Chemical mapping of a 307-nucleotide RNA with DMS and 2A3.
For 2A3 the reverse transcriptase was SuperScript II with manganese.
The reactions ran in a buffer of 150 mM KOAc, 10 mM MgCl2 and 150 mM bicine (pH 8.5), at 24 C.
Reactivities are given for positions 27 through 266.
For 2A3, 30,044 sequencing reads were counted.
DMS adducts were read by reverse transcription with MarathonRT.
The DMS profile rests on 85,353 reads.
[RMDB]
RNA sequence: GGGAACGACUCGAGUAGAGUCGAAAACCGCACGGUGACGUGCGGAACACAUUACGUACGCGUAAUGUGAACCACCUCGUACGCGAGGUGGAAGUUAACUUCUACGGAAGUUAACACAACGUAACUUCGGUUACGUUGAACCAACAUACUACGGUAUGUUGGAAGGACAGAGUAGGUAAACGUGCGUAAAGUGCCUGAGGGACGGGGAGUUGUCCUCAGGACGAACACCGAAAGGUGGCGGUACGUUUACCGCAUCUCGCUGUUCUAAGGUGAGAUUCGUCUCACCUAAAAGAAACAACAACAACAAC
Reactivity to DMS in 0.01 (KOAc 150mM, MgCl2 10mM, bicine 150mM(pH8.5), 24C), signal-to-noise 9, nucleotides 027 to 266: c000c000g040c000a000c010g010g000u020g000a120c000g030u000g000c000g020g010a090a160c010a010c000a000u000u000a000c000g020u010a090c200g030c010g020u000a000a010u000g010u000g010a170a220c010c000a010c000c000u000c000g020u010a110c200g020c010g010a010g000g020u000g000g010a030a060g010u000u000a000a010c000u000u000c000u000a130c200g020g000a020a000g000u000u000a000a010c000a300c030a010a000c000g010u000a000a010c000u000u030c180g020g010u000u000a000c000g010u000u000g000a160a280c010c000a000a000c000a000u000a000c000u000a110c170g030g010u000a000u000g000u000u000g000g000a060a020g010g000a010c010a010g000a020g000u000a090g010g010u000a010a010a010c010g010u000g000c000g000u000a090a020a020g000u000g000c000c000u000g000a020g010g010g010a020c030g010g010g000g000a040g000u010u020g000u000c000c000u000c000a010g000g000a080c150g000a010a020c010a000c000c000g000a100a080a130g000g020u000g000g000c000g000g010u000a000c020g000u000u000u000a000c020c000g000c030a100u000c010u000c010g000c020u000g000u000u000c010u010a120
Reactivity to 2A3 in 0.01 (KOAc 150mM, MgCl2 10mM, bicine 150mM(pH8.5), 24C), signal-to-noise 8, nucleotides 027 to 266: c000c000g020c000a000c010g030g060u110g060a030c010g000u010g010c000g000g000a030a000c000a000c000a000u000u000a000c000g020u020a020c290g000c000g150u000a000a000u000g000u000g010a010a020c000c000a000c000c000u000c000g020u040a030c300g030c010g120a000g000g000u000g000g000a000a000g000u000u000a000a000c010u000u000c010u010a070c190g140g000a000a000g000u010u000a010a000c060a000c000a070a000c000g000u000a000a000c000u040u070c280g140g000u000u000a000c000g000u000u010g000a010a010c000c000a000a000c000a010u000a000c010u010a010c230g120g000u000a000u000g000u000u000g010g040a070a030g000g000a000c000a000g000a000g010u010a000g010g000u000a000a000a000c000g000u000g000c000g000u000a000a000a050g010u010g010c000c000u020g020a080g070g160g040a010c010g010g070g000g010a020g020u260u200g000u200c000c000u000c000a000g000g000a000c000g000a000a000c000a000c010c000g060a070a030a020g000g000u000g000g000c000g000g010u000a000c000g000u000u000u000a000c010c000g000c000a010u000c000u000c000g000c000u010g010u010u010c040u100a080